[RMDB]
RNA sequence: GGGAACGACUCGAGUAGAGUCGAAAAGAUAUGGACGUACUACCGCUCGAUAAGUUGCAUUCGGAAACGAAUGGCAACUUUUGACGAGCGAUGUACGUCCUAAGUCAAAGUAGUGCUUCGGCACUACGCUAUAUUUAGUCUUCGGACUAAAUAUAGCAAAAGAAACAACAACAACAAC
Reactivity to DMS in 0.01 (KOAc 150mM, MgCl2 10mM, bicine 150mM(pH8.5), 24C), signal-to-noise 9, nucleotides 027 to 126: g000a050u000a300u000g000g000a010c000g010u000a000c000u000a090c080c010g020c000u000c000g010a160u000a010a010g010u000u000g010c000a040u000u000c000g000g000a120a110a250c010g010a010a010u000g030g010c000a000a000c000u000u000u000u010g020a230c160g000a020g010c000g020a010u000g010u000a000c010g010u000c000c000u000a010a070g010u000c030a100a100a180g010u000a000g010u000g000c000u000u020c230g030g010c000a010c000u000a000c010
Reactivity to 2A3 in 0.01 (KOAc 150mM, MgCl2 10mM, bicine 150mM(pH8.5), 24C), signal-to-noise 9, nucleotides 027 to 126: g040a020u070a060u180g000g000a000c000g010u000a000c010u050a070c010c030g000c000u000c010g070a080u010a140a010g000u010u010g000c010a010u010u000c010g040g040a090a090a070c030g020a010a020u100g260g040c010a000a010c000u020u020u010u040g120a050c010g000a000g000c000g000a000u010g000u000a000c000g000u000c000c000u000a010a000g000u010c030a040a060a130g000u000a000g000u000g010c010u070u120c300g150g000c000a000c000u000a000c020